[RMDB]
RNA sequence: GGGAACGACUCGAGUAGAGUCGAAAAAUAGGUCUUCCAGAAGAAAGGAUAAAGUCACAUAAGACACAAGGAACUAAUGCGGAGCUGACACCCAAGGCACCAUGUCCAGCCACAGACAGAAUAAAGAUCACUCCAAUGGCAUUGCUUCAGGUUAUGACACUACUACUCAUUUCGAUGAGUAGUAGUGAAAAGAAACAACAACAACAAC
Reactivity to 2A3 in 0.01 (KOAc 150mM, MgCl2 10mM, bicine 150mM(pH8.5), 24C), signal-to-noise 4, nucleotides 027 to 156: a000u130a040g050g000u020c010u060u000c040c020a030g060a070a010g020a030a110a030g040g020a030u070a070a090a020g060u070c020a020c010a130u130a140a060g050a000c030a000c010a050a070g010g020a080a020c080u070a140a020u110g030c050g020g010a000g000c060u020g020a020c020a030c030c040c030a020a040g020g000c030a030c040c020a040u050g030u000c030c030a020g020c020c000a050c010a030g040a020c010a020g080a090a020u130a110a050a040g050a040u040c020a020c070u000c030c000a020a030u060g030g000c040a040u030u060g020c020u080u070c050a030g040g040u050u070a060u150g020a000
Reactivity to DMS in 0.01 (KOAc 150mM, MgCl2 10mM, bicine 150mM(pH8.5), 24C), signal-to-noise 3, nucleotides 027 to 156: a120u000a030g010g010u000c020u000u000c050c010a170g040a110a100g010a070a070a130g010g020a090u000a030a080a100g010u000c030a070c070a130u010a170a150g020a110c050a110c080a060a100g010g000a040a070c040u010a050a040u000g020c040g010g010a100g050c050u000g000a190c040a100c040c070c020a110a110g010g020c020a050c040c040a090u020g000u000c010c000a180g020c010c010a070c040a070g000a080c040a090g000a060a110u000a080a070a080g010a080u000c060a060c070u000c020c020a030a070u010g000g010c050a090u000u000g000c020u000u000c080a060g000g030u020u000a110u010g010a300
The data come from the RNA Mapping Database (RMDB), library OK3TST.
Structure probing data (2A3 and DMS) for a 207-nucleotide construct.
2A3 adducts were read by reverse transcription with SuperScript II with manganese.
As a SHAPE reagent, 2A3 marks flexible, mostly unpaired nucleotides at the ribose 2'-OH.
Conditions: 150 mM KOAc, 10 mM MgCl2 and 150 mM bicine (pH 8.5), 24 C.